[RMDB]
RNA sequence: GGGAACGACUCGAGUAGAGUCGAAAAGCCGAUGAAUUGCCGAGAAGCCUGGCUCGAAAUCGUCGACGCAUCGACGACGGUCCUGCCAUGAUACCGUAACGAGGACAUGUCGCCUCGAAUGGCGUCGUAUAACAUGAGUGGUUCGCCACUCAUGUAACUGAAAUGAACAGUUCGCUGUUCAUUUCAGAAAAGAAACAACAACAACAAC
Reactivity to 2A3 in 0.01 (KOAc 150mM, MgCl2 10mM, bicine 150mM(pH8.5), 24C), signal-to-noise 4, nucleotides 027 to 156: g060c010c000g010a030u110g040a050a220u140u120g040c020c030g030a020g040a140a020g050c020c110u100g020g000c030u020c050g090a110a060a060u090c090g080u030c020g000a010c010g000c040a070u010c000g010a000c000g000a000c010g000g000u000c000c010u050g120c040c030a110u150g040a050u090a160c070c120g060u080a070a050c060g020a010g010g000a000c030a120u160g020u030c020g010c040c040u030c020g040a060a030u050g120g010c000g010u020c010g000u070a100u020a090a010c010a000u010g000a010g000u010g030g030u030u050c180g020c080c000a000c000u000c010a000u000g000u000a010a020
Reactivity to DMS in 0.01 (KOAc 150mM, MgCl2 10mM, bicine 150mM(pH8.5), 24C), signal-to-noise 2, nucleotides 027 to 156: g040c040c000g010a100u010g020a110a060u000u020g020c030c040g000a160g030a110a170g070c060c080u010g030g000c020u020c000g010a060a090a060u000c030g000u000c000g010a040c150g000c090a170u000c010g020a040c000g010a010c030g020g030u020c000c000u000g000c050c000a120u010g020a120u000a080c060c100g000u010a090a170c080g000a070g030g020a050c010a110u000g040u000c090g000c020c020u000c060g010a100a070u020g030g000c010g010u000c000g040u000a110u010a110a070c030a010u000g000a000g010u000g020g000u000u000c300g020c040c000a000c000u030c000a010u000g000u000a030a170

The data come from the RNA Mapping Database (RMDB), library M2RFPK. An RNA of 207 nucleotides, treated with 2A3 and DMS and read out base by base. DMS adducts were read by reverse transcription with MarathonRT.